An RNA of 177 nucleotides, treated with 2A3 and DMS and read out base by base. 2A3 adducts were read by reverse transcription with SuperScript II with manganese. The reactions ran in a buffer of 150 mM KOAc, 10 mM MgCl2 and 150 mM bicine (pH 8.5), at 24 C. High DMS reactivity at an A or C suggests that its Watson-Crick edge is free. The 2A3 profile rests on 15,311 reads.
RNA sequence: GGGAACGACUCGAGUAGAGUCGAAAAGGGAGUCUCAUCUUUGUAGACUUUGGGAUGAUGAGCGAGAUCAGCUCCGGGAGGAGGGAAAGUCUUGUGGAGCUGUUCUAUGCCGUGUACCGAGCGGAUGCUAAUCGCUCGGUUUCGACCGAGCGAUUAGAAAAGAAACAACAACAACAAC
Reactivity to 2A3 in 0.01 (KOAc 150mM, MgCl2 10mM, bicine 150mM(pH8.5), 24C), signal-to-noise 9, nucleotides 027 to 126: g060g010g000a040g060u010c010u010c020a080u050c080u130u280u180g180u230a060g060a180c020u110u150u130g070g000g020a070u120g020a020u050g030a040g080c060g020a040g010a050u030c000a000g000c000u000c010c000g030g020g020a040g050g060a090g030g060g040a050a060a030g050u050c030u170u250g240u090g060g000a000g000c000u000g000u010u000c010u030a100u180g010c000c010g030u040g020u050a090c050c050g000a020g010c020g030g010a020u090g040
Reactivity to DMS in 0.01 (KOAc 150mM, MgCl2 10mM, bicine 150mM(pH8.5), 24C), signal-to-noise 7, nucleotides 027 to 126: g010g010g010a100g010u000c010u010c020a080u000c120u000u000u010g020u010a070g010a070c070u000u010u010g020g000g010a090u010g000a060u000g010a090g030c130g000a050g010a030u000c010a020g000c000u000c000c010g000g000g000a090g000g010a140g000g000g010a100a080a130g000u000c060u000u010g020u010g010g000a030g010c000u000g000u000u000c010u000a070u010g020c010c010g000u000g000u010a130c080c060g010a170g010c040g000g000a100u010g010